[RMDB]
RNA sequence: GGGAACGACUCGAGUAGAGUCGAAAACAGAUACGUAGGCCCAUGAAAUUGAUGAACUGAGAGUUGCUUCCAGUCCUGAGCGCACCAUCUGGAAUUCCAGUCUGAGGUUACAAUUAGAACUCCUGACUCCAGAUCUACUGUUCGCAGUAGAUCUGGAAAAAGAAACAACAACAACAAC
Reactivity to 2A3 in 0.01 (KOAc 150mM, MgCl2 10mM, bicine 150mM(pH8.5), 24C), signal-to-noise 3, nucleotides 027 to 126: c010a000g020a070u060a050c030g070u060a070g020g070c000c000c000a010u080g070a010a120a060u170u180g030a050u030g020a050a000c010u010g020a010g010a010g140u070u190g050c000u060u000c000c000a030g010u000c000c010u070g020a020g060c120g000c010a040c000c060a060u050c010u020g020g010a070a010u090u040c010c000a020g020u010c020u020g040a000g020g050u020u060a050c040a070a050u100u080a090g020a170a030c000u050c000c000u010g030a050c020
Reactivity to DMS in 0.01 (KOAc 150mM, MgCl2 10mM, bicine 150mM(pH8.5), 24C), signal-to-noise 2, nucleotides 027 to 126: c100a150g010a110u010a070c100g020u000a080g020g000c030c010c020a080u100g000a030a020a090u030u000g000a180u010g020a070a060c070u000g000a110g010a030g000u010u010g010c050u010u000c000c000a050g010u030c020c060u000g000a120g000c000g010c070a050c050c040a070u000c020u000g010g000a130a100u000u020c060c000a070g000u000c040u000g010a050g000g020u000u010a060c070a090a170u070u000a100g010a070a060c070u030c010c000u000g010a110c150

Source: RMDB libraries RFM100 and RFMREP, as collected in RNAgym. An RNA of 177 nucleotides, treated with 2A3 and DMS and read out base by base. For DMS the reverse transcriptase was MarathonRT.